[RMDB]
RNA sequence: GGGAACGACUCGAGUAGAGUCGAAAACGGAAGCAUUAAAACCAUUCAAGCUAGUCAAUGCGUGGCGUGUCUCUCCGCAGCGUGUUGGCGAAUGUAAAGAGUGACUAAGCAUGUAGUACCGAGGAUGAUAAGAGCAAUUCGUUCGCGAAUUGCUCAACUGCUACAACAGGUUCGCCUGUUGUAGCAGAAAAGAAACAACAACAACAAC
Reactivity to 2A3 in 0.01 (KOAc 150mM, MgCl2 10mM, bicine 150mM(pH8.5), 24C), signal-to-noise 4, nucleotides 027 to 156: c020g050g020a070a030g000c020a020u090u140a060a050a010a080c040c000a020u090u060c070a070a040g020c020u060a020g010u010c000a010a020u010g020c010g020u040g140g000c000g030u060g080u040c020u020c010u000c080c030g020c010a010g010c010g000u010g020u010u000g010g000c000g020a030a010u080g040u070a060a080a000g020a020g020u030g000a030c020u030a030a020g090c010a040u050g020u090a070g020u050a060c030c050g030a040g070g020a030u100g010a030u090a220a110g010a000g000c010a000a000u010u000c020g010u010u040c180g000c000g090a000a000u000u000g000c000u000c000a000a000
Reactivity to DMS in 0.01 (KOAc 150mM, MgCl2 10mM, bicine 150mM(pH8.5), 24C), signal-to-noise 1, nucleotides 027 to 156: c040g000g000a070a120g020c030a070u000u010a000a100a110a140c060c070a060u020u000c060a130a240g000c060u000a130g010u000c000a020a030u000g010c030g050u010g020g070c020g000u000g010u000c110u040c050u010c200c000g020c000a080g020c000g010u000g000u010u000g010g000c050g010a110a040u010g030u000a060a110a120g000a100g000u000g000a060c070u000a090a110g050c080a050u000g000u000a090g030u000a060c020c030g030a100g000g000a100u000g000a150u010a040a080g000a050g030c000a010a010u000u030c020g030u000u000c210g040c030g000a010a030u000u000g000c010u000c010a000a060
Chemical mapping of a 207-nucleotide RNA with 2A3 and DMS. 2A3 is a SHAPE reagent: it acylates the 2'-hydroxyl of flexible nucleotides of all four kinds. For 2A3, 2,661 sequencing reads were counted. For DMS, 2,607 sequencing reads were counted. Source: RMDB library M2RFPK, as collected in RNAgym.